[RMDB]
Chemical mapping of a 207-nucleotide RNA with DMS and 2A3.
RNA sequence: GGGAACGACUCGAGUAGAGUCGAAAAAUAUCAGUCAAGCCAGUACCAGGAGCAAGUUCUAAAUUGUAGCAGAAGUUCUCUUAACUGACACUCAUUUAGCCAGCUCGCCAUAGAAGCCAACCUGUCCCUUUCCCUGCAAACAUACUGGCUACUGCACUAAGCUGUCUACAUUCGUGUAGACAGCUUAAAAAGAAACAACAACAACAAC
Reactivity to DMS in 0.01 (KOAc 150mM, MgCl2 10mM, bicine 150mM(pH8.5), 24C), signal-to-noise 2, nucleotides 027 to 156: a090u000a040u000c040a050g020u010c070a100a070g010c040c010a010g050u000a050c050c050a170g010g000a100g020c010a040a040g020u000u000c020u000a080a070a090u000u000g010u020a050g030c050a040g050a240a080g010u000u010c090u040c060u020u000a020a070c010u000g030a210c140a040c030u020c050a100u010u000u010a070g030c040c060a020g050c010u000c030g040c030c040a210u010a080g010a060a080g010c010c050a030a030c080c040u010g020u010c020c010c020u000u000u010c000c020c010u010g010c080a040a080a110c080a100u010a030c020u010g030g040c020u000a050c050u010g000c050a150c210
Reactivity to 2A3 in 0.01 (KOAc 150mM, MgCl2 10mM, bicine 150mM(pH8.5), 24C), signal-to-noise 2, nucleotides 027 to 156: a000u150a020u090c000a010g070u080c110a050a050g000c000c000a000g010u040a060c040c060a020g010g050a030g000c090a130a000g020u110u010c050u050a010a080a080u130u140g080u130a050g010c080a010g030a130a000g040u070u010c100u010c040u210u170a040a040c020u050g080a040c020a010c060u050c010a050u030u050u080a010g040c010c000a040g000c030u000c050g060c020c000a000u010a180g050a080a000g040c000c000a000a000c020c010u040g060u150c020c000c060u000u020u010c000c000c000u040g080c050a020a050a050c020a020u060a000c010u000g000g000c000u020a010c000u010g000c000a100c190

Record summary:
The DMS profile rests on 2,343 reads. The data come from the RNA Mapping Database (RMDB), library OK3TST.